[RMDB]
RNA sequence: GGGAACGACUCGAGUAGAGUCGAAAAGAUCGUUUUCGAACGAUCAGAAUUGGGGUCGUGGAAGAGCUAGCUCCUACUGAAGCCUCCACGGUAGAAGAGCUUGGACCUCUUCGUAACAUCGACGGAGGCACCCUUGUAAAGGCAUUUCGAUGCCUAAUAUGAGGGGUUAUUUCGAUAACCCCUCAUAAAAAGAAACAACAACAACAAC
Reactivity to DMS in 0.01 (KOAc 150mM, MgCl2 10mM, bicine 150mM(pH8.5), 24C), signal-to-noise 2, nucleotides 027 to 156: g000a030u000c000g010u000u000u000u000c170g050a020a030c010g000a010u000c000a060g000a110a170u010u000g010g020g030g020u000c030g040u020g000g000a060a040g030a060g030c050u000a090g000c010u000c010c010u000a170c030u000g000a080a130g030c000c000u000c010c010a300c030g020g000u000a080g000a040a120g020a040g030c020u000u000g030g010a120c300c010u000c020u000u020c020g000u000a150a120c100a110u000c050g000a070c060g030g010a060g060g050c020a060c010c000c030u010u040g030u000a070a090a060g010g000c000a040u000u000u000c190g000a070u000g020c000c010u000a050a090
Reactivity to 2A3 in 0.01 (KOAc 150mM, MgCl2 10mM, bicine 150mM(pH8.5), 24C), signal-to-noise 4, nucleotides 027 to 156: g000a000u010c000g000u020u020u060u140c230g100a030a000c000g000a000u000c000a010g130a050a150u150u180g070g000g000g040u020c030g050u090g080g050a050a030g000a020g040c040u060a020g000c000u020c000c020u000a030c000u020g080a150a010g020c000c000u000c000c000a030c020g010g000u010a010g010a300a000g010a000g010c080u180u280g140g060a120c010c000u000c000u020u020c010g050u130a040a050c020a090u100c040g060a060c130g000g000a000g000g000c000a020c000c000c010u010u070g150u180a200a100a060g010g000c000a010u080u110u150c160g050a010u030g010c010c000u030a060a010